[RMDB]
RNA sequence: GGGAACGACUCGAGUAGAGUCGAAAAAGACACUUUCUUCAUGGAGUGUAUUGGCAUUCUAGGUUAGCAUGUAGGAGCGGAAGAGGGCGACUGUAUUGCGUAGCGAGAGGUGAAAGUUGACGACCUAUCGUUCCUAAGAAUUCGUUCUUAGGAACGAAAAAGAAACAACAACAACAAC
Reactivity to DMS in 0.01 (KOAc 150mM, MgCl2 10mM, bicine 150mM(pH8.5), 24C), signal-to-noise 8, nucleotides 027 to 126: a100g010a060c050a030c030u000u000u020c020u010u010c160a120u020g000g000a020g010u000g000u010a080u020u020g010g010c080a050u010u000c030u010a080g000g020u010u000a070g010c060a040u000g010u010a060g020g010a120g020c070g010g000a070a050g010a100g020g010g010c050g010a080c060u000g010u010a050u010u010g010c050g000u010a060g010c050g000a070g010a070g010g010u000g000a050a070a060g010u000u000g010a100c090g010a100c050c030u000a170
Reactivity to 2A3 in 0.01 (KOAc 150mM, MgCl2 10mM, bicine 150mM(pH8.5), 24C), signal-to-noise 9, nucleotides 027 to 126: a000g110a000c020a000c020u090u110u110c030u150u100c080a130u210g030g000a020g010u030g020u040a140u060u110g070g000c030a030u060u000c020u060a040g080g030u070u070a020g020c030a030u050g040u060a030g010g060a030g020c040g030g040a070a030g020a040g020g020g010c020g030a030c020u030g030u090a100u080u120g020c040g020u020a030g020c030g030a050g010a010g060g030u030g030a090a060a020g020u040u040g040a070c050g040a030c010c010u030a050

Chemical mapping of a 177-nucleotide RNA with DMS and 2A3. As a SHAPE reagent, 2A3 marks flexible, mostly unpaired nucleotides at the ribose 2'-OH. 2A3 adducts were read by reverse transcription with SuperScript II with manganese. Conditions: 150 mM KOAc, 10 mM MgCl2 and 150 mM bicine (pH 8.5), 24 C. The data come from the RNA Mapping Database (RMDB), libraries RFM100 and RFMREP. For DMS the reverse transcriptase was MarathonRT. Reactivities are rounded to 0.1 and cut off at 0 and 3.